RNA sequence: GGGAACGACUCGAGUAGAGUCGAAAAGACGCCUAAUGGCGAAAAUGUAAAAUCAACUACACAGUAGAUAAAUACAAGUGCUAAAUCUCGCAACUAGUUGAUCUAGUCCAGCGGUGAGAUCCGCAGAAGGAUACUAGGUGUUCGCACCUAGUAUCCUAAAAGAAACAACAACAACAAC
Reactivity to 2A3 in 0.01 (KOAc 150mM, MgCl2 10mM, bicine 150mM(pH8.5), 24C), signal-to-noise 3, nucleotides 027 to 126: g000a000c010g000c040c000u220a280a180u260g050g000c020g030a060a070a000a110u260g010u120a000a000a000a130u000c000a020a040c010u020a000c140a010c060a120g130u150a040g050a080u160a030a080a010u140a070c060a090a130g080u010g110c010u050a050a170a090u020c060u010c040g060c020a010a080c010u010a000g000u010u070g010a020u040c050u030a000g030u020c000c080a000g000c000g000g010u040g040a040g000a020u000c000c000g000c000a010g070a190
Reactivity to DMS in 0.01 (KOAc 150mM, MgCl2 10mM, bicine 150mM(pH8.5), 24C), signal-to-noise 2, nucleotides 027 to 126: g060a280c000g000c000c000u030a110a070u050g050g030c000g020a050a070a110a090u020g000u000a070a160a140a020u000c010a080a080c000u000a050c160a110c230a030g000u040a000g050a050u020a040a100a070u020a150c040a160a110g080u000g010c110u030a040a050a070u000c000u050c050g000c180a050a030c150u000a000g010u000u000g000a010u110c050u000a120g000u000c000c070a060g000c020g010g000u040g010a060g000a000u000c030c160g050c000a050g000a090
Description
An RNA of 177 nucleotides, treated with 2A3 and DMS and read out base by base. Reactivities are given for positions 27 through 126. The RNA was probed in 150 mM KOAc, 10 mM MgCl2 and 150 mM bicine (pH 8.5) at 24 C. For 2A3 the reverse transcriptase was SuperScript II with manganese. For 2A3, 1,526 sequencing reads were counted. The data come from the RNA Mapping Database (RMDB), library OK1LIB.